[RMDB]
RNA sequence: GGGAACGACUCGAGUAGAGUCGAAAAACGUAUUCAUCUAGAUGGCGCUUCGGACAACGGCAUCACAUAAGAGAUGCAGCUCCUGACUUCUCCUCUGAUCUUCGUGAUCAGAGUUUUGAGUCGUCAGCUUACUCAGAACGUUCGCGUUCUGAGUAAGAAAAGAAACAACAACAACAAC
Reactivity to DMS in 0.01 (KOAc 150mM, MgCl2 10mM, bicine 150mM(pH8.5), 24C), signal-to-noise 1, nucleotides 027 to 126: a160c060g010u000a040u000u000c050a090u010c020u010a080g030a040u010g030g000c020g010c070u020u010c060g030g000a040c070a040a070c080g000g010c000a020u000c010a100c130a110u010a100a120g000a120g000a030u000g000c040a130g010c070u010c080c040u000g000a010c020u000u000c010u020c020c000u000c000u000g000a010u000c010u000u010c230g000u000g010a020u000c010a000g000a000g010u000u000u000u000g010a030g050u010c070g000u000c000a010g010
Reactivity to 2A3 in 0.01 (KOAc 150mM, MgCl2 10mM, bicine 150mM(pH8.5), 24C), signal-to-noise 2, nucleotides 027 to 126: a010c130g010u110a120u080u100c070a140u060c070u050a060g010a130u060g090g060c070g000c070u130u060c070g070g040a010c010a070a010c070g050g000c000a010u010c020a010c020a090u270a110a080g030a010g000a060u060g030c020a020g050c030u020c000c020u010g000a010c010u000u000c000u000c000c000u040c000u000g000a000u000c000u060u140c190g140u230g030a000u000c010a000g000a010g000u020u030u060u020g010a000g000u000c000g010u000c000a000g020

Background: The data come from the RNA Mapping Database (RMDB), library RFMREP. Structure probing data (DMS and 2A3) for a 177-nucleotide construct. For DMS the reverse transcriptase was MarathonRT. Reactivities are given for positions 27 through 126. For 2A3, 1,453 sequencing reads were counted.